[RMDB]
RNA sequence: GGGAACGACUCGAGUAGAGUCGAAAAGAAGUUUAUGAUUUAGCGGAAGUUAAAGUUGAUGACAUCUCAGUUGCUAGAUUGGUUAGAUUAAUAGCCGAAUUGGAUCCUAGCGAGCCCAAUUUAAAGAGGUCCAGUAAUGAUUCGUCAUUACUGGACCAAAAGAAACAACAACAACAAC
Reactivity to DMS in 0.01 (KOAc 150mM, MgCl2 10mM, bicine 150mM(pH8.5), 24C), signal-to-noise 1, nucleotides 027 to 126: g000a060a140g010u000u000u000a000u030g000a040u000u000u000a030g000c000g030g010a160a070g050u010u010a010a010a050g000u000u000g000a030u000g000a100c030a050u000c000u000c050a200g010u000u000g000c000u000a030g030a110u010u000g020g000u010u000a060g010a120u000u030a120a110u000a010g010c030c040g020a030a170u010u000g010g000a200u000c040c030u120a080g020c080g010a050g030c060c000c000a030a040u000u000u050a120a080a120g000a160